The record gives the reactivity of an RNA of 177 nucleotides to DMS and 2A3. For DMS, 2,141 sequencing reads were counted. It was measured as part of the RMDB library TTRDEL. For DMS the reverse transcriptase was MarathonRT.

RNA sequence: GGGAACGACUCGAGUAGAGUCGAAAAGAUAUGGAUACCGAAGCUCGAGGAUCCGUAACAUCAGAUCGGAAACGAUCUGUGGGGGAGAGUCAAGGUAUCCUAAGUCAAACUUGGCUUCGGCCAAGAAGAAAAGCUAUUUCUUCGGAAAUAGCUUUUCAAAAGAAACAACAACAACAAC
Reactivity to DMS in 0.01 (KOAc 150mM, MgCl2 10mM, bicine 150mM(pH8.5), 24C), signal-to-noise 3, nucleotides 027 to 126: g010a060u010a300u000g000g000a020u000a010c000c000g000a270a300g010c010u010c010g010a100g020g000a060u000c010c000g000u010a080a130c140a030u010c010a000g000a020u000c000g000g000a130a060a150c010g000a000u000c000u000g040u000g010g020g000g000g000a060g000a000g010u010c020a050a300g000g010u000a000u000c000c010u010a020a080g010u000c030a090a110a160c010u000u000g000g020c000u010u010c180g040g000c000c000a000a000g010a070a120
Reactivity to 2A3 in 0.01 (KOAc 150mM, MgCl2 10mM, bicine 150mM(pH8.5), 24C), signal-to-noise 2, nucleotides 027 to 126: g000a020u080a050u130g000g000a000u000a010c010c020g120a250a020g000c010u010c020g160a290g050g030a000u020c030c010g010u040a090a050c020a240u280c010a020g000a000u000c000g000g040a100a000a090c020g020a010u000c000u020g000u020g020g010g010g000g030a030g010a000g020u080c050a060a010g030g020u010a010u000c000c000u000a040a020g000u000c020a000a100a150c010u010u000g000g000c020u020u070c280g120g000c000c000a000a000g000a030a000